[RMDB]
RNA sequence: GGGAACGACUCGAGUAGAGUCGAAAAUUCUGCCUGGGGAUCCUGAAGAUAAAAAGCUUUGAAAAGUCGAAUUCAUGGUCGUGGAAGCUGAGCCCAUAUUAAGAGAUGUCAGGUUGGUAGGGGUUCCAAAUUCGAGAGUAUUCGUACUCUCGAAUUUAAAAGAAACAACAACAACAAC
Reactivity to DMS in 0.01 (KOAc 150mM, MgCl2 10mM, bicine 150mM(pH8.5), 24C), signal-to-noise 3, nucleotides 027 to 126: u010u010c040u000g020c040c020u010g000g000g000g020a040u000c020c020u010g000a090a140g010a140u020a040a100a140a150a130g010c020u000u010u010g010a060a070a110a190g020u010c050g010a100a080u000u010c100a080u010g000g010u000c040g000u010g000g010a070a070g010c050u010g010a060g000c050c000c020a080u000a070u010u010a040a100g010a110g010a050u010g000u000c020a050g000g000u000u000g000g010u010a050g000g000g000g000u010u000c030c050
Reactivity to 2A3 in 0.01 (KOAc 150mM, MgCl2 10mM, bicine 150mM(pH8.5), 24C), signal-to-noise 1, nucleotides 027 to 126: u020u000c000u030g020c020c020u040g000g000g030g070a020u020c020c000u070g080a050a000g040a120u290a120a130a010a040a010g000c040u130u080u200g290a150a120a060a020g100u070c010g030a100a090u080u040c010a000u130g080g000u030c030g070u080g020g070a000a020g040c040u030g010a000g040c000c000c040a070u100a100u120u160a080a060g030a010g000a020u060g040u070c010a010g000g000u030u040g040g000u070a040g000g030g000g000u040u000c010c000